[RMDB]
RNA sequence: GGGAACGACUCGAGUAGAGUCGAAAAGAAACAGGCCGAAAGAAAUUUGACGAAACGGCCUGACAAGGCUCGUAAAGAAUCGCCAUCGUAAAGUACAGCAAGGAUGAGCCAAAUGCUGAGAAAGAAAAUAGUGAUGAGGGUUCGCCCUCAUCACUAUAAAAGAAACAACAACAACAAC
Reactivity to DMS in 0.01 (KOAc 150mM, MgCl2 10mM, bicine 150mM(pH8.5), 24C), signal-to-noise 2, nucleotides 027 to 126: g030a040a150a130c000a020g040g000c000c000g010a100a050a120g020a080a080a230u020u010u040g000a110c140g000a110a110a110c000g030g000c010c000u030g050a020c110a030a130g000g000c000u010c020g010u010a130a100a040g010a080a080u000c040g030c040c000a040u010c110g040u000a100a080a130g010u010a060c020a000g000c000a080a120g000g010a080u000g030a030g010c000c000a120a140a070u020g020c020u000g000a120g010a080a060a190g030a090a080a080
Reactivity to 2A3 in 0.01 (KOAc 150mM, MgCl2 10mM, bicine 150mM(pH8.5), 24C), signal-to-noise 2, nucleotides 027 to 126: g030a030a190a020c000a020g000g000c010c000g100a070a030a000g220a020a210a190u300u250u250g100a080c120g000a120a090a000c000g000g000c000c000u000g000a000c000a010a000g000g000c020u070c030g080u060a000a000a150g070a010a060u080c030g020c030c040a030u060c030g010u070a170a000a000g080u080a080c030a000g000c040a090a000g070g060a040u100g000a000g020c030c030a010a010a000u060g020c010u000g000a000g100a160a140a000g120a060a040a040
Chemical mapping of a 177-nucleotide RNA with DMS and 2A3. The reactions ran in a buffer of 150 mM KOAc, 10 mM MgCl2 and 150 mM bicine (pH 8.5), at 24 C. Reactivities are rounded to 0.1 and cut off at 0 and 3. DMS adducts were read by reverse transcription with MarathonRT. It was measured as part of the RMDB library OK1LIB.